[RMDB]
RNA sequence: GGGAACGACUCGAGUAGAGUCGAAAAUGCCCGCCUCGGCGAUCACGUCACCGGGCUCGAACUCCUCCUGGCGGAACCGGUCGGCCAGCGCGGUGAGCGCGUCCUCGUCGUCGAAUCCGCGCAGCAGUAUCAUCCGAAAUUUCGAUUUCGGAUGAUAAAAAGAAACAACAACAACAAC
Reactivity to 2A3 in 0.01 (KOAc 150mM, MgCl2 10mM, bicine 150mM(pH8.5), 24C), signal-to-noise 6, nucleotides 027 to 126: u110g030c000c000c000g030c010c040u140c050g020g010c010g060a140u150c090a060c240g050u010c020a010c050c000g000g020g010c010u020c040g070a080a040c020u010c010c000u020c010c000u010g030g010c000g020g000a040a040c040c010g040g090u160c030g020g000c010c010a050g000c010g000c000g020g070u150g080a130g100c010g000c000g040u080c010c040u070c020g100u030c010g030u030c010g020a040a060u010c000c000g000c000g000c000a010g020c000a000g050
Reactivity to DMS in 0.01 (KOAc 150mM, MgCl2 10mM, bicine 150mM(pH8.5), 24C), signal-to-noise 7, nucleotides 027 to 126: u020g020c000c000c010g010c060c050u020c130g020g000c030g020a130u020c170a110c120g020u020c020a080c140c010g000g000g000c030u020c110g000a080a110c090u000c020c010u000c040c020u000g000g020c010g000g000a070a100c130c030g010g000u010c050g010g000c020c080a110g000c010g020c010g000g020u010g000a180g000c030g000c030g000u000c080c110u010c140g010u010c020g020u000c020g000a150a190u010c020c010g010c020g010c010a100g000c080a130g010